[RMDB]
RNA sequence: GGGAACGACUCGAGUAGAGUCGAAAAGACGAACAGGCCGAACGCCUGGUGCGCCACGCCUGCCGGGUCGCCGAACGUCGGCACCUGCCCUGGAGCGUGGUACACGUCGAUACCGGCGGCUUGCGCAUAAUCCACCCACUUUCGAGUGGGUGGAUUAAAAAGAAACAACAACAACAAC
Reactivity to DMS in 0.01 (KOAc 150mM, MgCl2 10mM, bicine 150mM(pH8.5), 24C), signal-to-noise 2, nucleotides 027 to 126: g000a050c080g010a100a150c020a000g010g020c010c080g000a110a300c280g000c000c040u000g000g030u000g000c000g020c010c070a040c140g020c000c020u010g030c030c000g000g000g010u000c090g010c170c030g000a100a070c220g010u010c040g000g020c010a040c050c000u000g000c070c070c080u000g000g010a140g010c030g000u000g000g020u000a030c070a080c020g000u000c010g000a080u010a130c020c020g000g020c030g000g000c050u000u000g000c050g020c030a130
Reactivity to 2A3 in 0.01 (KOAc 150mM, MgCl2 10mM, bicine 150mM(pH8.5), 24C), signal-to-noise 2, nucleotides 027 to 126: g070a010c050g020a090a040c010a000g040g010c030c130g110a080a020c120g010c040c020u000g020g000u020g030c040g000c000c000a030c060g000c000c010u070g040c000c010g020g000g000u080c070g020c020c000g000a260a050c100g170u110c000g080g000c010a040c000c040u060g040c060c010c060u110g060g020a190g050c000g020u060g010g010u030a020c020a000c030g020u040c020g030a010u090a250c010c020g010g000c030g020g010c070u030u080g020c000g010c010a010
Background:
The data come from the RNA Mapping Database (RMDB), library OK2TST. An RNA of 177 nucleotides, treated with DMS and 2A3 and read out base by base.